[RMDB]
RNA sequence: GGGAACGACUCGAGUAGAGUCGAAAAAUGGCGAAUGCAUGGGGAACUACAUCUGUGUCGCGAGUUCGAUUCUCGCCAGGGCCUGGUCCUGUAUCUCAGUUGGUAGAGCAAGCUGUUCCCCGGACACAAAAUCCAGCUAGGUUCGCCUAGCUGGAAAGAACUUAACUAAGUUCGCUUAGUUAAGUUCAAAAGAAACAACAACAACAAC
Reactivity to 2A3 in 0.01 (KOAc 150mM, MgCl2 10mM, bicine 150mM(pH8.5), 24C), signal-to-noise 7, nucleotides 027 to 156: a000u110g060g010c050g080a110a030u120g030c080a090u120g010g000g010g000a010a010c020u050a010c040a100u080c050u040g060u030g080u080c030g000c010g010a000g010u040u070c030g020a030u080u010c000u000c000g000c000c000a000g000g010g000c030c190u150g080g040u040c000c000u020g020u070a080u060c060u010c030a150g050u120u160g050g020u040a020g010a030g060c040a070a010g020c040u030g020u010u010c010c000c000c000g010g010a040c040a000c020a040a140a010a030u010c010c000a000g000c000u000a000g010g010u030u030c070g080c030c000u000a000g000c000u000g000g000a000a000a000
Reactivity to DMS in 0.01 (KOAc 150mM, MgCl2 10mM, bicine 150mM(pH8.5), 24C), signal-to-noise 4, nucleotides 027 to 156: a100u000g000g010c040g010a100a050u000g000c040a090u010g020g010g030g020a070a090c000u000a050c030a060u010c080u000g040u010g010u010c040g020c030g010a060g010u000u000c090g020a300u010u010c000u000c010g020c110c030a080g030g010g020c030c110u000g040g020u000c010c010u020g010u000a020u000c030u000c020a210g010u000u010g000g020u000a080g010a150g030c030a040a080g020c040u000g000u000u000c000c000c000c020g020g010a160c070a090c070a040a070a080a100u000c000c000a010g010c000u000a010g020g010u000u010c300g030c010c000u000a010g010c000u000g000g010a000a010a060